[RMDB]
RNA sequence: GGGAACGACUCGAGUAGAGUCGAAAAAUUACGCAUCGGCUAGCGAGAUCAUGCAAAAGGCUAUUUUUAUCGACCUUGAUAGUCGCCUGCCCUCGCUCAUGGUAAAGACCUGCGAUUUUUGGGAUGCCAGAGCGUAUGGGUUCGCCCAUACGCUCUGAAAAGAAACAACAACAACAAC
Reactivity to 2A3 in 0.01 (KOAc 150mM, MgCl2 10mM, bicine 150mM(pH8.5), 24C), signal-to-noise 1, nucleotides 027 to 126: a000u040u070a000c020g040c030a040u090c070g060g000c030u070a010g010c010g010a020g010a020u060c050a050u070g090c030a000a080a020a130g020g020c040u060a080u010u090u000u040u070a190u150c140g000a130c020c000u030u030g100a030u030a020g000u000c020g010c040c030u040g020c020c000c000u000c010g020c050u020c030a130u120g020g020u090a140a160a000g070a100c010c010u020g070c030g060a090u010u010u050u100u210g060g000g060a040u070g030c050
Reactivity to DMS in 0.01 (KOAc 150mM, MgCl2 10mM, bicine 150mM(pH8.5), 24C), signal-to-noise 2, nucleotides 027 to 126: a070u040u020a070c050g010c010a010u000c100g010g020c050u000a060g010c000g000a060g000a110u000c050a050u000g060c120a050a060a240a120g020g010c060u000a010u000u000u020u000u020a100u020c070g000a050c110c050u000u000g010a050u020a040g010u000c000g020c130c060u000g010c080c080c040u000c010g050c000u000c140a030u020g010g020u000a060a050a040g000a140c020c010u000g010c120g010a110u000u000u030u000u000g010g020g010a060u010g020c040